[RMDB]
RNA sequence: GGGAACGACUCGAGUAGAGUCGAAAAGGUAGGACAUUAACGGUGCCUCUGGCAGCAGCUGCCAAAUAUGUGCAAGUCACAGAGCAUGACCACAGCUGCCGGGUUUGGCCUUUCACCAUGGAAAAUGCACCCAUUUGGUGCUUGUUUUGCCAGAUAACCUCUCACUAAGGUUCGCCUUAGUGAGAGGAAAAGAAACAACAACAACAAC
Reactivity to 2A3 in 0.01 (KOAc 150mM, MgCl2 10mM, bicine 150mM(pH8.5), 24C), signal-to-noise 4, nucleotides 027 to 156: g050g010u100a010g020g030a010c050a080u140u170a200a080c130g050g040u120g010c000c020u040c040u020g000g020c000a000g000c010a010g010c000u040g020c030c030a060a090a060u300a080u110g060u010g010c080a170a070g080u210c000a000c010a060g060a020g020c040a080u100g040a070c040c010a060c040a140g000c010u010g000c000c000g010g020g020u090u120u180g040g000c000c030u060u080u080c050a070c020c010a050u050g040g030a050a070a070a110u120g030c010a030c030c030c040a090u090u050u260g000g000u040g020c020u030u030g030u010u050u040u040g040c000c010a020g000a090u140a060a080
Reactivity to DMS in 0.01 (KOAc 150mM, MgCl2 10mM, bicine 150mM(pH8.5), 24C), signal-to-noise 1, nucleotides 027 to 156: g040g030u000a040g000g010a090c050a100u020u010a090a090c050g020g040u020g000c000c030u000c020u010g020g000c010a030g010c000a040g030c010u000g000c030c060a070a030a050u020a070u010g050u000g030c070a240a130g020u010c070a050c030a050g030a150g000c110a270u010g000a200c010c140a030c050a090g010c020u000g030c020c050g030g000g010u000u000u000g000g030c100c000u010u010u000c020a230c050c030a100u000g030g010a120a080a090a130u010g030c010a070c000c020c170a170u000u010u000g010g040u000g000c040u000u000g000u000u010u000u020g020c110c030a150g020a150u030a050a180
This 207-nucleotide RNA was probed chemically with 2A3 and DMS.
Source: RMDB library OK3TST, as collected in RNAgym.
For DMS the reverse transcriptase was MarathonRT.